[RMDB]
RNA sequence: GGGAACGACUCGAGUAGAGUCGAAAAUCGGCGCAAGCCGACUAUGGUGAUAAACGGACGGUGUAAUAAACCCAUUGGACCCGGGGGCGGUACCCGGCGCCUCCACCACAGCACAGCUUGCCGAUCACUUGACUAUGAGUUUCGACUCAUAGUCAAGAAAAGAAACAACAACAACAAC
Reactivity to 2A3 in 0.01 (KOAc 150mM, MgCl2 10mM, bicine 150mM(pH8.5), 24C), signal-to-noise 9, nucleotides 027 to 126: u020c000g010g000c040g020c100a020a020g010c010c010g010a000c000u010a030u050g010g020u020g050a170u120a110a090a020c030g010g050a010c030g010g030u020g020u050a090a150u140a210a150a030c010c020c020a030u050u140g080g030a100c030c000c000g000g000g000g010g020c020g010g010u070a070c010c010c000g010g000c000g000c000c000u020c000c000a010c010c000a020c020a000g020c080a020c000a140g000c000u020u030g000c010c000g020a030u060c020a010
Reactivity to DMS in 0.01 (KOAc 150mM, MgCl2 10mM, bicine 150mM(pH8.5), 24C), signal-to-noise 5, nucleotides 027 to 126: u000c000g010g030c040g030c160a080a040g000c000c060g010a150c030u010a060u010g000g010u000g010a080u020a020a050a090c050g000g000a090c050g020g020u000g000u000a070a080u030a070a140a160c120c060c020a070u010u020g010g000a100c130c020c030g030g000g000g000g010c070g010g000u020a040c050c030c040g000g010c040g010c020c020u000c030c020a070c020c010a040c060a040g010c040a080c060a090g000c010u000u000g010c010c010g000a030u010c120a150

The record gives the reactivity of an RNA of 177 nucleotides to 2A3 and DMS. For DMS the reverse transcriptase was MarathonRT. It was measured as part of the RMDB libraries RFM100 and RFMREP.